[RMDB]
Structure probing data (2A3 and DMS) for a 177-nucleotide construct.
The reactions ran in a buffer of 150 mM KOAc, 10 mM MgCl2 and 150 mM bicine (pH 8.5), at 24 C.
RNA sequence: GGGAACGACUCGAGUAGAGUCGAAAAUAGGAAGGAACAGACAAACAUAAGAUGGGUACAGGGUUGCUGGCAUUGUGCCAGUUGUCUUAGGGACAUACACGGUGGCUGCAGCCAGUACAGAGCCAGCGCAUCCAAAGGUAUUCGUACCUUUGGAUGCAAAAGAAACAACAACAACAAC
Reactivity to 2A3 in 0.01 (KOAc 150mM, MgCl2 10mM, bicine 150mM(pH8.5), 24C), signal-to-noise 2, nucleotides 027 to 126: u150a000g050g000a040a040g000g010a060a000c020a050g110a050c030a020a090a000c040a080u190a120a090g060a110u130g040g050g030u020a030c000a030g110g000g060u050u020g000c000u010g040g040c010a060u060u090g020u050g000c040c050a030g040u040u000g000u000c000u000u120a140g130g000g000a020c000a000u110a020c010a000c030g040g020u040g080g000c020u040g000c010a000g000c000c000a040g000u000a010c030a040g070a000g110c000c010a010g020c020
Reactivity to DMS in 0.01 (KOAc 150mM, MgCl2 10mM, bicine 150mM(pH8.5), 24C), signal-to-noise 3, nucleotides 027 to 126: u000a070g010g000a050a070g010g020a030a040c060a080g000a150c100a050a060a110c110a100u000a080a080g010a070u000g010g030g010u000a040c060a100g000g010g010u000u000g000c000u000g000g010c020a110u000u010g000u000g000c070c080a090g010u010u000g010u000c020u020u030a170g020g010g020a030c030a040u010a100c060a050c050g000g020u000g010g000c020u010g010c040a080g000c020c010a060g000u000a060c070a090g000a100g010c030c050a060g010c150
Annotation: For DMS the reverse transcriptase was MarathonRT. It was measured as part of the RMDB library OK2TRN.